[RMDB]
RNA sequence: GGGAACGACUCGAGUAGAGUCGAAAACGGUUUUAACACUUCAUCCACAGAGGUAUGAAACUAGUCCUUGGUCAAGUGCAUUUUCCACCUAUCAGAGAAACAUCUAGUGAGGGUCAAGCCUUAAAGGGUAGCUAGAUAACUUCGGUUAUCUAGCUACAAAAGAAACAACAACAACAAC
Reactivity to 2A3 in 0.01 (KOAc 150mM, MgCl2 10mM, bicine 150mM(pH8.5), 24C), signal-to-noise 3, nucleotides 027 to 126: c030g000g020u000u050u040u110a070a040c060a000c050u040u010c010a090u010c060c040a060c010a080g040a010g000g020u080a050u130g080a100a020a000c010u020a040g080u000c040c010u010u060g070g000u070c050a050a030g000u050g130c040a060u090u000u060u040c020c020a080c020c010u110a110u120c020a030g110a010g060a140a160a030c040a040u030c020u030a020g020u010g110a060g040g050g030u030c040a080a030g040c010c000u110u070a100a050a020g170g030
Reactivity to DMS in 0.01 (KOAc 150mM, MgCl2 10mM, bicine 150mM(pH8.5), 24C), signal-to-noise 3, nucleotides 027 to 126: c140g000g020u000u010u000u000a040a080c080a020c040u000u000c030a060u020c050c070a080c150a120g000a030g010g010u010a060u000g010a060a040a040c030u000a090g010u010c020c020u000u000g010g020u010c050a040a070g010u010g010c050a050u000u000u000u000c020c030a070c070c080u000a060u010c070a080g000a090g000a110a070a050c100a050u000c050u000a040g010u020g020a060g000g000g000u000c110a060a090g000c020c030u000u010a030a090a110g010g020
An RNA of 177 nucleotides, treated with 2A3 and DMS and read out base by base. For 2A3, 2,109 sequencing reads were counted. It was measured as part of the RMDB library OK2TRN. 2A3 adducts were read by reverse transcription with SuperScript II with manganese. The RNA was probed in 150 mM KOAc, 10 mM MgCl2 and 150 mM bicine (pH 8.5) at 24 C.